RNA sequence: GGGAACGACUCGAGUAGAGUCGAAAAUGUGGCAAGGAGGUCUCCAUUGACCCGAUUCGCUACUGUCUUAGAAGUCGUCUGGGCGCCCGCAAUGAAGCAGUCGCUUGGAUGUUACCGGUUGUGGGCAUAUUAGUCAGAAGUUCGCUUCUGACUAAUAAAAAGAAACAACAACAACAAC
Reactivity to 2A3 in 0.01 (KOAc 150mM, MgCl2 10mM, bicine 150mM(pH8.5), 24C), signal-to-noise 2, nucleotides 027 to 126: u100g000u010g000g020c010a020a020g020g000a020g050g050u020c010u000c170c130a210u080u190g010a020c020c000c010g020a030u030u020c050g000c010u030a010c000u010g020u040c020u040u160a140g020a200a010g100u060c000g010u000c030u040g010g000g010c020g000c020c020c020g010c010a100a300u300g130a170a040g030c010a000g030u070c020g020c040u060u050g070g000a040u060g050u080u050a030c000c010g070g050u030u040g000u060g020g000g030c020a020
Reactivity to DMS in 0.01 (KOAc 150mM, MgCl2 10mM, bicine 150mM(pH8.5), 24C), signal-to-noise 5, nucleotides 027 to 126: u000g010u010g000g020c010a020a030g010g000a210g010g000u000c010u000c200c300a150u010u010g010a040c010c000c010g000a300u000u000c130g020c010u000a010c010u000g000u010c030u010u000a100g020a100a070g010u010c030g000u010c010u000g000g000g010c040g000c090c000c030g020c040a100a070u010g000a140a120g010c020a050g000u000c040g010c040u000u000g010g000a050u000g010u000u010a060c050c060g010g010u010u000g010u000g010g010g000c190a130